About this RNA
The record gives the reactivity of an RNA of 177 nucleotides to 2A3 and DMS. The RNA was probed in 150 mM KOAc, 10 mM MgCl2 and 150 mM bicine (pH 8.5) at 24 C. In probing experiments dimethyl sulfate is read out at A N1 and C N3, which are open when not base-paired.

RNA sequence: GGGAACGACUCGAGUAGAGUCGAAAAAGGAUAGGAUUCGUCCUAUCCUACACCAAAACCUCCUGGCGGUGCGGCGCCGGCCCCGCCGGGAAGGCCCCCUUAUUGGUAGCUGGUUCGCCAGCUACAAACUUUUCGUUGUAUUCGUACAACGAAAAGUAAAAGAAACAACAACAACAAC
Reactivity to 2A3 in 0.01 (KOAc 150mM, MgCl2 10mM, bicine 150mM(pH8.5), 24C), signal-to-noise 2, nucleotides 027 to 126: a010g000g000a010u020a010g000g000a010u030u070c210g060u070c060c000u000a000u000c000c000u000a010c010a020c010c010a040a040a080a140c010c010u000c000c000u000g010g010c000g000g000u020g020c050g120g060c070g070c100c020g010g020c000c010c040c000g060c020c000g020g010g000a000a010g020g000c000c000c000c010c000u070u150a210u140u170g120g000u010a020g000c000u000g010g020u020u000c070g030c040c000a010g000c000u000a000c000a000a000
Reactivity to DMS in 0.01 (KOAc 150mM, MgCl2 10mM, bicine 150mM(pH8.5), 24C), signal-to-noise 2, nucleotides 027 to 126: a030g000g010a020u000a000g010g000a020u000u010c190g020u000c000c010u000a010u010c000c000u000a010c090a230c000c010a100a050a110a170c020c000u000c010c010u000g010g020c000g000g010u000g010c020g040g000c050g000c130c070g000g000c010c040c000c010g010c000c000g010g010g010a020a020g020g000c010c010c000c000c020u000u010a090u010u000g000g000u000a010g010c000u000g000g020u000u010c180g000c000c000a000g000c000u000a000c000a050a090